[RMDB]
RNA sequence: GGGAACGACUCGAGUAGAGUCGAAAACUUGCAUUGAUUACGUCCCUGCCCUUUGUACACACCGCCCGUCGCACCUACCGAUUGGAUAUUGUGACGAACCUUGCAGAGUGAGUUCUAUUCAGCAAUGGAUGUGGCAAUAGUUCGCUAUUGCCACAUCAAAAGAAACAACAACAACAAC
Reactivity to DMS in 0.01 (KOAc 150mM, MgCl2 10mM, bicine 150mM(pH8.5), 24C), signal-to-noise 2, nucleotides 027 to 126: c050u000u000g020c070a050u000u010g020a110u000u000a150c060g000u000c010c000c020u000g010c020c040c080u000u000u010g020u000a060c090a070c090a080c070c070g020c070c030c000g040u000c060g010c060a060c060c060u010a170c050c010g000a120u000u010g010g010a040u000a110u010u000g030u000g000a060c030g000a060a090c040c020u010u000g010c010a040g000a070g020u000g000a090g010u010u000c050u010a140u000u010c040a050g020c160a040a090u010g010
Reactivity to 2A3 in 0.01 (KOAc 150mM, MgCl2 10mM, bicine 150mM(pH8.5), 24C), signal-to-noise 1, nucleotides 027 to 126: c040u020u080g020c010a130u050u060g030a040u180u180a040c070g000u030c000c000c000u010g090c000c000c030u030u060u090g060u080a020c030a000c020a000c010c040g010c010c000c000g020u000c000g000c030a030c040c030u080a060c000c050g150a130u070u150g010g000a000u030a080u030u110g040u010g030a050c040g030a040a050c000c000u030u030g040c040a010g030a020g140u030g030a010g030u050u020c020u050a070u040u070c040a000g060c060a000a060u200g130